[RMDB]
RNA sequence: GGGAACGACUCGAGUAGAGUCGAAAACAAGGGCGCGAUCCGCAAGCUGACAAUCGCCAGCGAGAUCUACCCGGUGCUGUGCGGCAGCGCGUUCAAGAACAAGGGCGUGCAGCCGAUGCUGGAUGCCCAUGGUACUCUCAUUCGUGAGAGUACCAUGAAAAGAAACAACAACAACAAC
Reactivity to DMS in 0.01 (KOAc 150mM, MgCl2 10mM, bicine 150mM(pH8.5), 24C), signal-to-noise 9, nucleotides 027 to 126: c110a110a140g010g010g000c020g020c080g010a060u000c010c040g020c060a110a130g010c010u000g010a080c110a130a100u010c150g010c020c020a050g010c020g010a090g010a060u000c050u000a140c050c020c020g000g010u000g010c050u000g020u010g010c020g000g010c220a090g010c010g010c010g010u000u000c020a100a120g000a110a120c290a090a110g000g000g000c000g030u000g010c010a030g010c000c220g000a050u010g010c010u000g000g000a040u000g010c010c010
Reactivity to 2A3 in 0.01 (KOAc 150mM, MgCl2 10mM, bicine 150mM(pH8.5), 24C), signal-to-noise 9, nucleotides 027 to 126: c040a100a150g020g020g000c050g020c040g050a030u030c010c000g000c030a020a030g010c040u100g100a090c070a090a210u150c080g010c030c020a020g020c020g040a150g000a100u000c020u050a090c010c020c000g000g010u080g000c030u040g040u090g050c010g030g000c030a050g020c020g000c010g020u020u020c060a120a070g080a160a080c080a130a180g030g000g000c010g020u060g040c010a010g010c010c070g060a060u230g010c000u040g020g100a040u070g000c000c000